This 207-nucleotide RNA was probed chemically with 2A3 and DMS. As a SHAPE reagent, 2A3 marks flexible, mostly unpaired nucleotides at the ribose 2'-OH. The RNA was probed in 150 mM KOAc, 10 mM MgCl2 and 150 mM bicine (pH 8.5) at 24 C. For DMS, 3,015 sequencing reads were counted. DMS adducts were read by reverse transcription with MarathonRT.
RNA sequence: GGGAACGACUCGAGUAGAGUCGAAAAUUACACACGUUUGGGCCAAACAUCUACCCCACAGGAAAUGGACACAUCAGCCCCUAGGGAUGAAAGAAUGAUGCAGGGCAUGGGAAAGCAGAGAAAUCUCCUGAGUGAGAAAGAAGACAAAUUCACAGAAAAUUUAGGUACGAUUCGUCGUACCUAAAUUAAAAGAAACAACAACAACAAC
Reactivity to 2A3 in 0.01 (KOAc 150mM, MgCl2 10mM, bicine 150mM(pH8.5), 24C), signal-to-noise 3, nucleotides 027 to 156: u080u140a040c050a000c000a020c070g020u040u070u050g020g020g000c060c030a070a080a050c030a080u020c020u090a100c000c000c030c030a050c030a040g030g090a110a080a120u160g020g000a050c080a020c010a120u150c060a040g060c000c010c000c000u060a080g000g010g080a050u080g040a040a050a070g050a070a050u160g020a010u060g010c020a060g040g030g000c020a010u080g000g010g010a050a010a010g000c040a010g010a000g050a090a070a060u040c010u040c030c020u090g100a040g040u100g030a030g030a000a080a000g040a030a000g030a000c000a000a120a030u170u170c130a020c020a050g240a130a180
Reactivity to DMS in 0.01 (KOAc 150mM, MgCl2 10mM, bicine 150mM(pH8.5), 24C), signal-to-noise 2, nucleotides 027 to 156: u000u010a060c030a110c110a080c090g050u010u000u000g000g010g000c020c030a090a060a130c090a090u000c040u010a080c000c000c000c040a270c070a120g000g010a030a090a070u000g000g010a110c000a100c070a100u000c020a060g010c060c020c040c050u010a110g050g000g000a060u030g020a050a070a120g010a090a070u000g010a080u000g040c000a060g020g030g030c060a050u000g000g010g000a050a070a110g020c030a080g000a070g000a060a050a080u000c020u010c010c020u010g030a130g000u020g020a050g030a100a070a090g010a040a030g000a070c010a020a020a080u000u010c060a080c050a210g000a050a090